Overview
An RNA of 170 nucleotides, treated with DMS and 2A3 and read out base by base. Values cover nucleotides 27 to 129. 2A3 adducts were read by reverse transcription with SuperScript II with manganese.

RNA sequence: GGGAACGACUCGAGUAGAGUCGAAAAAUCAGGAGAAAACUGGCUCUCCCUUAGCCAUCCGAGUGGACGUCUGUCCUCCUUCGGAUGCCCAGGUCGGACCGCGGGGAGGUGGAGAUGCCAUGCCGACACGCCCGGGACUUCGGUCCCGGGAAAAGAAACAACAACAACAAC
Reactivity to DMS in 0.01 (KOAc 150mM, MgCl2 10mM, bicine 150mM(pH8.5), 24C), signal-to-noise 6, nucleotides 027 to 129: a010u070c070a120g040g020a000g020a080a020a090a120c150u040g010g050c050u000c020u010c030c040c070u000u060a170g040c260c010a020u040c000c000g000a000g020u030g000g000a030c020g010u050c170u090g030u000c030c030u030c070c110u040u020c060g010g030a020u050g000c080c010c020a120g000g010u020c100g010g010a220c060c050g020c080g030g040g000g020a030g050g000u110g030g000a090g030a080u060g050c000c030a070u030g050c000c000g020a070c080a060c200g040
Reactivity to 2A3 in 0.01 (KOAc 150mM, MgCl2 10mM, bicine 150mM(pH8.5), 24C), signal-to-noise 5, nucleotides 027 to 129: a000u100c070a040g020g030a060g060a090a120a020a060c030u020g010g000c010u000c000u010c010c000c010u070u150a030g060c050c020a000u010c010c010g010a000g020u030g000g000a010c020g130u180c230u300g020u020c010c010u030c020c030u100u060c020g000g010a010u010g000c000c000c000a040g000g010u020c030g020g020a020c010c020g040c050g040g000g010g000a010g030g050u110g010g030a080g000a000u110g020c020c010a030u080g010c000c010g040a030c010a010c060g030
Conditions: 150 mM KOAc, 10 mM MgCl2 and 150 mM bicine (pH 8.5), 24 C.